[RMDB]
RNA sequence: GGGAACGACUCGAGUAGAGUCGAAAAACGAGAGUCCCACUGUCCCCACAUUCAGCCCCGUGAAAUUAAUGUACUGGUGCACAAUCCAGUCUCUCCCACAUGAAAGCGAAGUCCCCGUGGAGCUUUAUACCUAGUCUAACUUCGGUUAGACUAGGUAAAAAGAAACAACAACAACAAC
Reactivity to 2A3 in 0.01 (KOAc 150mM, MgCl2 10mM, bicine 150mM(pH8.5), 24C), signal-to-noise 5, nucleotides 027 to 126: a000c100g020a070g010a030g110u050c010c000c010a010c010u040g030u040c000c000c040c000a050c000a030u100u100c040a040g020c000c000c000c020g040u050g020a080a050a050u210u170a070a040u160g040u090a040c020u030g020g000u060g040c110a020c060a110a040u040c000c010a010g010u000c000u000c000u000c000c030c000a030c010a040u110g080a080a040a000g040c030g020a020a000g030u030c020c020c000c000g040u060g030g030a030g010c000u010u020u010a110
Reactivity to DMS in 0.01 (KOAc 150mM, MgCl2 10mM, bicine 150mM(pH8.5), 24C), signal-to-noise 5, nucleotides 027 to 126: a110c060g010a100g010a200g000u000c000c010c010a180c060u000g000u000c010c020c000c030a080c110a080u010u010c070a100g010c030c000c010c020g020u000g000a080a070a110u020u020a060a070u030g000u010a050c010u000g000g010u010g020c160a070c280a110a100u010c020c010a020g010u010c010u000c040u010c010c000c030a070c070a050u010g010a070a060a070g000c030g000a090a090g000u010c000c000c000c100g040u000g000g020a100g010c000u000u000u010a060

The record gives the reactivity of an RNA of 177 nucleotides to 2A3 and DMS. 2A3 adducts were read by reverse transcription with SuperScript II with manganese. Conditions: 150 mM KOAc, 10 mM MgCl2 and 150 mM bicine (pH 8.5), 24 C.